[RMDB]
Source information:
The record gives the reactivity of an RNA of 207 nucleotides to DMS and 2A3. Reactivities are rounded to 0.1 and cut off at 0 and 3. Reactivities are given for positions 27 through 156. The DMS profile rests on 11,697 reads. For 2A3 the reverse transcriptase was SuperScript II with manganese.

RNA sequence: GGGAACGACUCGAGUAGAGUCGAAAACAAUGAAGUUAAAGGAUGAGUUGUUAAGUACCGAUGUACCACUUUCCACUUUAAGGCUUGACUUGCCUACAUGGUACUAUGUUACCUGGCCCACAUUAAGUAAUAGAACCUCCCGCUGGAAGUUAGCUGGUAGUACUCCAUUAUUCGUAAUGGAGUACUAAAAAGAAACAACAACAACAAC
Reactivity to DMS in 0.01 (KOAc 150mM, MgCl2 10mM, bicine 150mM(pH8.5), 24C), signal-to-noise 4, nucleotides 027 to 156: c050a100a130u000g020a120a100g020u000u000a060a080a110g010g000a100u000g010a160g020u000u000g020u000u000a060a080g010u010a070c050c040g040a170u000g020u000a030c040c020a040c040u010u000u010c020c020a090c080u010u000u000a110a070g020g020c020u010u010g020a060c100u000u020g010c020c010u000a100c170a040u010g010g030u000a040c030u000a110u000g010u000u000a030c010c020u000g000g000c010c020c020a040c070a060u000u010a040a090g020u010a020a100u000a130g000a040a060c030c040u000c000c010c040g020c070u000g010g000a060a110g010u000u000a080g020c010u000g020g010
Reactivity to 2A3 in 0.01 (KOAc 150mM, MgCl2 10mM, bicine 150mM(pH8.5), 24C), signal-to-noise 3, nucleotides 027 to 156: c030a000a140u160g050a090a050g060u090u120a170a040a030g080g040a100u120g030a040g040u070u020g020u080u140a080a040g030u030a060c000c070g040a040u130g020u060a050c010c030a050c060u030u040u060c020c030a090c040u090u100u150a090a020g000g000c000u030u070g060a070c010u080u110g000c000c000u040a070c020a060u080g000g000u000a000c010u080a090u120g070u080u040a030c010c010u020g050g000c000c030c000a050c020a050u120u080a110a030g050u040a040a100u060a150g080a010a010c030c000u010c010c000c000g010c010u000g000g020a040a030g040u070u030a010g010c020u010g000g020